[RMDB]
RNA sequence: GGGAACGACUCGAGUAGAGUCGAAAAUGCCCGCCGAGAAGGGUGACGAAGGCGUUGCUGGACUCGAUGGACGAGCAGGACGUCCGGGACACUUUGGCCAGAAGGGAGCACCCGGACCACCGGGAGACUAAUUACUAUGCUUCGGCAUAGUAAUUAGAAAAGAAACAACAACAACAAC
Reactivity to 2A3 in 0.01 (KOAc 150mM, MgCl2 10mM, bicine 150mM(pH8.5), 24C), signal-to-noise 5, nucleotides 027 to 126: u110g060c010c010c010g010c020c030g050a070g020a090a040g060g000g020u010g010a030c040g020a080a020g050g050c030g050u020u070g220c010u030g010g110a140c020u010c020g090a150u180g120g120a060c030g010a020g030c020a020g020g030a020c010g030u020c010c000g000g000g030a030c020a020c070u100u090u120g050g030c040c030a030g040a110a050g040g000g020a040g020c020a050c010c010c000g000g020a040c040c020a060c030c000g000g010g000a030g030a010
Reactivity to DMS in 0.01 (KOAc 150mM, MgCl2 10mM, bicine 150mM(pH8.5), 24C), signal-to-noise 9, nucleotides 027 to 126: u010g010c010c000c000g020c100c050g010a090g010a150a130g010g010g020u000g010a120c050g010a130a120g010g010c040g010u000u010g010c020u000g000g010a180c040u000c040g000a250u020g010g010a120c020g000a070g020c030a050g000g000a090c060g010u010c000c020g000g000g010a140c090a060c040u000u010u000g020g010c070c100a090g010a070a070g000g010g000a110g010c070a090c020c010c000g010g000a130c130c170a080c080c010g000g000g000a100g010a220